[RMDB]
RNA sequence: GGGAACGACUCGAGUAGAGUCGAAAAAUCCUGGCAUUCGUGCCAGGAUGUUUACCGAGAAAGUCCCUCGGUAUAAAAGGGCAACCCUUGGAAACAUGGGAAUAAUCGCAGUGUUCGCACUGCGAAAGAAUAUCUCUUAAUUCGUUAAGAGAUAUUCAAAAGAAACAACAACAACAAC
Reactivity to DMS in 0.01 (KOAc 150mM, MgCl2 10mM, bicine 150mM(pH8.5), 24C), signal-to-noise 9, nucleotides 027 to 126: a020u000c000c000u000g000g010c000a020u000u010c180g030u000g020c000c000a010g000g000a000u000g000u000u000u000a070c000c000g000a040g000a090a080a110g010u000c010c010c000u000c010g000g010u000a030u010a040a070a090a070g000g010g010c130a130a150c010c000c000u000u000g000g000a160a090a180c020a010u000g000g000g010a130a070u010a090a110u000c000g020c000a000g020u000g010u000u010c190g010c010a010c000u000g000c000g000a000a030a060
Reactivity to 2A3 in 0.01 (KOAc 150mM, MgCl2 10mM, bicine 150mM(pH8.5), 24C), signal-to-noise 4, nucleotides 027 to 126: a000u000c000c000u000g000g000c010a010u020u040c180g070u050g000c000c000a000g000g000a000u000g000u000u040u030a030c000c010g000a020g020a060a170a010g190u050c000c010c000u000c000g000g020u040a030u070a030a050a010a000g030g010g010c030a060a080c010c000c000u010u010g040g020a040a040a020c010a020u030g010g010g070a060a100u160a070a050u040c000g000c000a000g000u010g040u050u090c170g020c070a000c010u000g000c000g000a010a000a000
The record gives the reactivity of an RNA of 177 nucleotides to DMS and 2A3.
For 2A3 the reverse transcriptase was SuperScript II with manganese.
It was measured as part of the RMDB library M2PK50.
DMS adducts were read by reverse transcription with MarathonRT.